[RMDB]
RNA sequence: GGGAACGACUCGAGUAGAGUCGAAAAGAGAAUGGUAUUGUCAAAGAAUCACUGACUUAGAAUAUUGAAUAAUUUUUCGUGAUGAGUACACCUAAAAGCCCAGAUUUCACCACGAUGCAAUCAACAUAUGCAUGUAGAAAUCGGCACCUGUACCUCAGAUACGCAUCAUCUUCGGAUGAUGCGUAUCAAAAGAAACAACAACAACAAC
Reactivity to DMS in 0.01 (KOAc 150mM, MgCl2 10mM, bicine 150mM(pH8.5), 24C), signal-to-noise 1, nucleotides 027 to 156: g010a080g000a090a200u040g050g010u000a100u010u000g000u050c010a040a080a160g030a170a080u000c040a120c040u000g010a050c080u000u000a080g020a110a030u000a100u010u010g040a150a070u010a050a050u030u000u000u000u000c030g000u040g000a060u000g000a070g000u000a080c020a030c000c050u000a020a020a120a220g020c030c070c070a230g010a070u000u000u050c010a150c080c050a060c000g040a030u010g000c070a050a180u030c100a100a080c100a040u000a060u000g000c060a040u000g000u020a200g020a030a030a060u000c050g000g030c090a070c000c060u030g020u000a050c070c050u050c030a220
Reactivity to 2A3 in 0.01 (KOAc 150mM, MgCl2 10mM, bicine 150mM(pH8.5), 24C), signal-to-noise 3, nucleotides 027 to 156: g100a000g020a060a090u090g020g000u080a070u120u170g030u050c060a090a100a060g060a080a070u060c030a060c100u050g080a030c050u100u110a040g040a150a100u150a190u140u160g050a070a030u150a180a120u130u050u020u080u110c040g020u040g020a040u010g010a090g030u000a010c010a030c040c080u110a100a090a010a010g060c050c030c020a030g020a020u000u000u010c060a050c150c000a030c120g060a000u030g020c000a010a070u060c040a100a060c040a110u200a030u160g000c000a000u030g010u010a080g030a010a000a000u010c000g010g000c020a050c000c010u100g000u050a040c030c000u040c050a000